[RMDB]
RNA sequence: GGGAACGACUCGAGUAGAGUCGAAAACAUGAAUGAAUAUGCACCAAGUGAUCUGUCAUACACUGCAUAUUACAAAGACCUCUGCAAAUACAAUCGUGGCAAGCACGUGCUAACCUUCAACCCCACCGUGUUGUCUUUACUUCGGUAAAGACAACACAAAAGAAACAACAACAACAAC
Reactivity to 2A3 in 0.01 (KOAc 150mM, MgCl2 10mM, bicine 150mM(pH8.5), 24C), signal-to-noise 2, nucleotides 027 to 126: c050a070u090g080a080a060u070g000a050a020u060a010u050g010c030a010c070c040a120a100g020u060g040a110u080c070u260g170u120c080a020u060a170c030a010c080u020g010c000a030u020a020u060u130a100c030a000a150a010g070a070c030c060u060c060u060g040c020a060a040a060u170a120c070a040a030u160c040g020u020g000g000c060a130a090g070c020a040c060g030u000g000c040u030a020a060c000c000u090u090c010a060a110c020c000c010c020a030c070c020
Reactivity to DMS in 0.01 (KOAc 150mM, MgCl2 10mM, bicine 150mM(pH8.5), 24C), signal-to-noise 1, nucleotides 027 to 126: c180a020u010g000a010a090u000g000a040a080u000a010u000g040c010a040c060c170a090a160g030u000g040a010u020c180u000g010u000c060a000u000a080c140a080c170u000g000c040a040u000a010u000u020a130c080a050a120a040g010a000c130c080u000c120u000g010c100a020a010a130u010a000c170a060a050u000c170g000u000g070g030c010a030a110g000c000a060c050g010u000g020c000u000a090a060c110c060u000u000c060a100a140c020c000c000c140a060c250c260
The data come from the RNA Mapping Database (RMDB), library OK2TRN. This 177-nucleotide RNA was probed chemically with 2A3 and DMS. For 2A3 the reverse transcriptase was SuperScript II with manganese. DMS (dimethyl sulfate) methylates the pairing face of unpaired adenines and cytosines. Values cover nucleotides 27 to 126.